[RMDB]
Conditions: 150 mM KOAc, 10 mM MgCl2 and 150 mM bicine (pH 8.5), 24 C. An RNA of 177 nucleotides, treated with 2A3 and DMS and read out base by base. As a SHAPE reagent, 2A3 marks flexible, mostly unpaired nucleotides at the ribose 2'-OH.
RNA sequence: GGGAACGACUCGAGUAGAGUCGAAAAGCCGCGUGAGGGAUGAAGGCCUUCGGGUUGUAAACCUCUUUCAGCAGGGACGAAGCGUGAGUGACGGUACCUGCAGAAGAAGCACCGGCAAUCUACGUGCAAUUAAUAUGAUAUUCGUAUCAUAUUAAUUAAAAGAAACAACAACAACAAC
Reactivity to 2A3 in 0.01 (KOAc 150mM, MgCl2 10mM, bicine 150mM(pH8.5), 24C), signal-to-noise 7, nucleotides 027 to 126: g000c000c000g020c040g020u030g020a010g000g040g000a020u300g000a090a000g000g010c000c000u010u020c100g070g000g000u000u030g000u000a000a000a000c000c000u000c000u000u020u010c000a000g000c000a000g000g000g020a010c000g000a020a010g000c010g020u110g070a140g000u020g010a020c000g000g020u160a020c000c000u000g000c000a000g010a020a000g020a040a000g010c010a000c000c000g000g000c000a000a030u000c000u020a030c010g040u030g020c010
Reactivity to DMS in 0.01 (KOAc 150mM, MgCl2 10mM, bicine 150mM(pH8.5), 24C), signal-to-noise 9, nucleotides 027 to 126: g010c000c000g010c210g010u010g010a060g000g000g000a020u050g020a300a300g000g000c010c010u010u060c120g010g000g000u000u000g000u000a010a300a300c020c000u010c030u010u000u000c020a060g000c000a010g000g000g000a280c000g000a080a300g000c000g000u070g000a200g000u000g000a300c020g010g000u030a220c010c010u000g000c010a060g000a030a040g010a100a130g010c050a020c020c000g000g000c010a040a040u000c010u010a030c040g000u000g000c070
Notes
Reactivities are given for positions 27 through 126. For DMS, 40,498 sequencing reads were counted.